RNA sequence: GGGAACGACUCGAGUAGAGUCGAAAAGAAAAAGCUUAGGUGACCGAAAUAAGACUACAUCCAAGUUGGACAACUACUAAGAUGUGUUGUCUUAAGAUUUGUCGUCGACGGUGUCUAAGCGAAGAAAGGGAUACUAUUAGUUCGCUAAUAGUAUCCCAAAAGAAACAACAACAACAAC
Reactivity to DMS in 0.01 (KOAc 150mM, MgCl2 10mM, bicine 150mM(pH8.5), 24C), signal-to-noise 4, nucleotides 027 to 126: g010a100a040a070a100a170g010c030u010u000a010g010g000u000g000a010c020c000g010a090a090a100u020a140a110g000a010c000u000a020c040a010u000c070c120a090a090g010u020u030g010g000a060c050a040a020c000u030a030c020u010a160a100g000a080u020g000u010g000u020u000g000u000c000u000u010a060a070g000a080u010u010u020g010u010c080g010u000c040g000a200c040g010g010u000g020u000c010u000a010a010g000c000g000a060a040g010a080a070a120
Reactivity to 2A3 in 0.01 (KOAc 150mM, MgCl2 10mM, bicine 150mM(pH8.5), 24C), signal-to-noise 9, nucleotides 027 to 126: g170a010a060a010a000a000g010c000u000u000a000g070g020u080g240a080c010c000g050a040a100a140u210a070a040g000a000c000u010a000c000a000u010c050c030a130a090g110u110u120g070g010a000c000a010a010c000u280a010c010u100a150a150g070a300u300g040u000g000u030u000g000u000c000u030u050a030a010g020a050u080u060u160g000u010c020g000u000c010g010a050c000g000g010u000g000u000c000u000a000a000g000c010g010a030a000g020a010a050a020

This 177-nucleotide RNA was probed chemically with DMS and 2A3.
It was measured as part of the RMDB library OK1LIB.
For 2A3, 15,846 sequencing reads were counted.
The reactions ran in a buffer of 150 mM KOAc, 10 mM MgCl2 and 150 mM bicine (pH 8.5), at 24 C.
2A3 adducts were read by reverse transcription with SuperScript II with manganese.
DMS adducts were read by reverse transcription with MarathonRT.